[RMDB]
RNA sequence: GGGAACGACUCGAGUAGAGUCGAAAAUGGGAUCAGCGCAGCCGGAUACCGUGAUUCUGGAUACGUCUGAACUGGUCACGGUCGUGGCACUGGUGAAGCUGCAUACUGAUGCACUUCACGCCACGCGCAUUUUGAAUGAGUUCGCUCAUUCAAAAUGAAAAGAAACAACAACAACAAC
Reactivity to DMS in 0.01 (KOAc 150mM, MgCl2 10mM, bicine 150mM(pH8.5), 24C), signal-to-noise 9, nucleotides 027 to 126: u010g010g000g010a030u000c010a020g020c300g000c010a030g010c040c010g000g000a100u000a070c010c020g010u010g010a190u010u010c130u010g010g000a090u000a070c040g000u000c020u000g000a070a050c030u000g000g010u000c010a060c050g010g010u010c020g020u000g000g010c040a170c220u010g020g010u000g010a020a000g010c240u000g000c000a030u000a190c300u010g000a040u000g010c000a040c000u000u000c000a010c010g000c010c000a010c010g010c110g010
Reactivity to 2A3 in 0.01 (KOAc 150mM, MgCl2 10mM, bicine 150mM(pH8.5), 24C), signal-to-noise 9, nucleotides 027 to 126: u130g040g040g010a010u020c010a010g010c020g000c040a010g010c010c010g020g020a050u150a300c010c020g040u090g110a260u250u080c080u200g000g010a020u030a070c010g020u000c020u020g010a040a030c010u010g010g000u010c020a010c060g060g050u130c010g000u000g010g000c040a030c170u200g090g000u000g000a000a000g050c160u020g000c010a010u080a160c150u290g160a050u020g000c000a000c000u000u000c000a000c030g000c000c000a000c000g000c010g000
Source: RMDB library OK2TST, as collected in RNAgym. Chemical mapping of a 177-nucleotide RNA with DMS and 2A3. The 2A3 profile rests on 52,977 reads. For DMS the reverse transcriptase was MarathonRT. The RNA was probed in 150 mM KOAc, 10 mM MgCl2 and 150 mM bicine (pH 8.5) at 24 C.